[RMDB]
RNA sequence: GGGAACGACUCGAGUAGAGUCGAAAAAAAGAUAUGGACGUCGUCAAGAGCAUCGAUCGUAUAAAAGUCUACAUCGGAAACGAUGUAGUCGCUAUACGGGAGCUCGAAGCGACGUCCUAAGUCAAAAGGAUAGUAUAUAGUUCGCUAUAUACUAUCCAAAAGAAACAACAACAACAAC
Reactivity to 2A3 in 0.01 (KOAc 150mM, MgCl2 10mM, bicine 150mM(pH8.5), 24C), signal-to-noise 4, nucleotides 027 to 126: a000a010a010g080a030u100a050u100g000g000a000c000g000u010c000g020u050c040a090a040g000a000g000c010a150u300c050g100a070u060c010g010u010a010u010a010a270a030a020g010u000c000u000a000c000a000u000c000g040g000a070a040a040c010g000a000u000g000u010a000g010u000c010g020c030u010a000u000a010c000g020g010g000a020g010c000u000c010g010a020a000g010c020g010a000c000g000u000c000c000u000a000a000g000u000c000a000a020a040a060
Reactivity to DMS in 0.01 (KOAc 150mM, MgCl2 10mM, bicine 150mM(pH8.5), 24C), signal-to-noise 7, nucleotides 027 to 126: a110a080a080g010a050u000a300u000g010g010a010c000g020u000c000g030u000c010a050a300g000a010g020c000a180u010c200g010a070u010c000g010u000a010u000a000a120a100a160g000u000c000u000a010c000a010u000c000g000g000a110a070a140c000g010a000u000g010u000a000g010u000c020g020c300u000a010u000a000c000g010g000g000a030g010c000u000c000g000a200a300g000c000g000a000c010g000u000c000c010u000a000a060g010u010c030a070a050a120a170